[RMDB]
RNA sequence: GGGAACGACUCGAGUAGAGUCGAAAAAGUACCAAGAAUCAUAUGAGCCUUUUCAGUACUUGCAUACCGAUAUAUUUGGUCCUGUACAUCACUUACCGAAAAGUGCACCUUCUUACUUUAUAUCGUAAAUUACUACUGCGUUCGCGCAGUAGUAAUUAAAAGAAACAACAACAACAAC
Reactivity to 2A3 in 0.01 (KOAc 150mM, MgCl2 10mM, bicine 150mM(pH8.5), 24C), signal-to-noise 4, nucleotides 027 to 126: a010g020u030a000c010c010a050a040g100a050a060u160c160a020u070a140u300g050a030g030c000c020u040u050u060u050c050a000g000u010a040c020u050u040g050c030a030u050a130c000c000g020a010u080a000u000a120u190u060u080g010g000u020c030c070u010g030u030a030c020a070u160c060a010c020u090u140a060c040c000g060a060a030a040a000g120u170g060c010a070c000c020u120u160c040u070u030a070c020u070u200u070a140u060a010u120c030g050u050a000
Reactivity to DMS in 0.01 (KOAc 150mM, MgCl2 10mM, bicine 150mM(pH8.5), 24C), signal-to-noise 2, nucleotides 027 to 126: a050g040u010a140c080c040a050a090g000a060a050u030c110a060u070a040u030g030a100g040c040c000u000u000u000u030c090a080g020u020a000c030u010u000g000c270a050u030a080c070c020g000a040u000a120u010a100u030u000u000g010g020u000c090c090u010g000u020a050c090a070u030c130a010c010u030u030a090c120c090g020a000a020a000a050g000u010g000c060a090c120c020u000u000c020u000u000a000c040u010u000u010a000u000a070u010c030g000u030a050